The record gives the reactivity of an RNA of 177 nucleotides to 2A3 and DMS. The DMS profile rests on 5,091 reads. The data come from the RNA Mapping Database (RMDB), library OK1LIB. Values cover nucleotides 27 to 126. DMS adducts were read by reverse transcription with MarathonRT. For 2A3 the reverse transcriptase was SuperScript II with manganese.

[RMDB]
RNA sequence: GGGAACGACUCGAGUAGAGUCGAAAAUGGUGAUACGGUUAAAUUAAUGUACAAAGGUCAACCAAUGACAUUCAGACUAUUAUUAGUUGAUACACCUGAAACAAAGCAUCCUAAAAAAGGUGUAGAGGGUUAGUGUAUUCUUCGGAAUACACUAACCAAAAGAAACAACAACAACAAC
Reactivity to 2A3 in 0.01 (KOAc 150mM, MgCl2 10mM, bicine 150mM(pH8.5), 24C), signal-to-noise 3, nucleotides 027 to 126: u110g010g000u050g020a080u080a040c040g000g150u080u100a070a090a030u200u140a130a080u210g090u070a050c070a010a080a030g040g000u030c020a000a160c040c020a040a120u090g020a020c040a050u050u140c060a060g010a080c040u030a010u230u020a070u090u120a080g000u040u020g040a020u010a030c000a000c020c010u070g070a080a030a010c090a020a080a010g080c010a070u110c020c060u070a080a050a020a000a000a000g020g010u010g010u050a060g050a050g080
Reactivity to DMS in 0.01 (KOAc 150mM, MgCl2 10mM, bicine 150mM(pH8.5), 24C), signal-to-noise 4, nucleotides 027 to 126: u030g000g060u000g000a070u010a030c070g000g000u020u010a020a100a160u030u030a050a010u030g000u000a100c110a020a060a170g000g000u010c110a030a090c110c120a050a210u000g010a010c100a050u020u030c200a200g000a030c070u030a030u010u010a030u010u000a020g000u000u000g010a140u010a040c010a020c010c000u000g000a090a070a130c150a040a070a100g000c080a080u000c000c010u030a020a020a040a070a060a050g000g000u000g020u000a010g010a090g000